[RMDB]
An RNA of 207 nucleotides, treated with 2A3 and DMS and read out base by base. For 2A3 the reverse transcriptase was SuperScript II with manganese. For 2A3, 971 sequencing reads were counted. For DMS the reverse transcriptase was MarathonRT.

RNA sequence: GGGAACGACUCGAGUAGAGUCGAAAAAACUCUUCCGUCGAUUUUUCUGAAGCUUCAGAAGAAAGCUCUCAAUCUCCAGUAUCUGAAGGCCAUGCAAGUCUCGAUUCCGUUGCUUUGUUUAACUCUCAGCGCUGGACGUCUUACUUACGGGAAGGGCCACCUUGGAAUAGUUCGCUAUUCCAAGGUGAAAAGAAACAACAACAACAAC
Reactivity to 2A3 in 0.01 (KOAc 150mM, MgCl2 10mM, bicine 150mM(pH8.5), 24C), signal-to-noise 2, nucleotides 027 to 156: a020a000c010u000c000u020u000c020c020g020u040c030g060a070u040u070u100u190u190c040u090g020a020a010g020c020u050u010c020a110g040a130a020g050a060a250a000g040c020u000c030u000c050a090a110u020c010u010c070c000a030g040u050a220u170c030u010g030a030a030g050g060c040c030a040u070g000c000a020a000g040u020c010u020c090g250a300u290u120c090c010g000u050u040g000c030u070u060u070g050u010u120u080a060a060c010u000c000u020c060a010g020c030g020c030u000g010g010a040c050g030u000c020u050u090a080c000u060u020a020c090g050g010g000a010a020g000g000g020c020
Reactivity to DMS in 0.01 (KOAc 150mM, MgCl2 10mM, bicine 150mM(pH8.5), 24C), signal-to-noise 1, nucleotides 027 to 156: a100a050c020u000c010u000u000c020c020g050u010c090g000a150u000u020u000u010u000c010u000g000a100a160g000c030u000u000c000a120g000a120a130g010a040a020a090g000c020u000c080u000c070a100a120u000c040u000c010c050a080g010u000a070u000c020u000g000a030a040g000g010c030c090a100u000g010c030a040a060g000u010c060u000c020g000a220u000u000c100c070g060u000u000g000c030u000u010u000g000u000u000u000a050a080c040u000c010u000c050a040g000c190g050c030u000g020g010a030c060g010u020c070u000u000a090c080u000u000a070c110g000g030g020a110a040g000g000g020c120